[RMDB]
RNA sequence: GGGAACGACUCGAGUAGAGUCGAAAAGGAACUAUGUUCAAAGACGAAGCCUCCACGUCAUCGUUUCGACGUCCGUAGACGGGAGAGCAUAGUUAAGAUCUGGAGGAGGCACGGAUCAAAAUAAAAACGUGGAUGAUGUGUUCGCACAUCAUCUACGAAAAGAAACAACAACAACAAC
Reactivity to DMS in 0.01 (KOAc 150mM, MgCl2 10mM, bicine 150mM(pH8.5), 24C), signal-to-noise 9, nucleotides 027 to 126: g010g000a040a020c000u000a000u000g010u010u000c000a020a090a140g010a020c000g000a070a180g010c000c000u000c000c010a300c010g000u000c020a120u030c070g000u000u000u010c040g010a180c110g020u020c070c150g000u030a040g010a020c010g010g000g000a080g000a010g000c000a000u000a010g010u000u000a040a050g000a010u000c000u000g010g000a160g010g020a020g000g010c010a170c000g000g000a000u000c010a120a060a070a070u040a040a060a070a080a120
Reactivity to 2A3 in 0.01 (KOAc 150mM, MgCl2 10mM, bicine 150mM(pH8.5), 24C), signal-to-noise 9, nucleotides 027 to 126: g130g010a000a000c000u000a000u000g010u000u010c010a040a040a030g010a010c010g030a040a010g000c000c000u000c000c000a010c000g010u000c010a080u110c040g030u030u060u080c070g060a070c040g070u030c040c020g070u050a030g020a050c010g000g010g010a020g000a000g000c000a000u000a000g000u020u040a060a020g000a000u000c000u010g010g010a060g020g000a000g030g000c000a000c010g000g000a000u000c010a000a030a020a020u170a020a050a010a000a010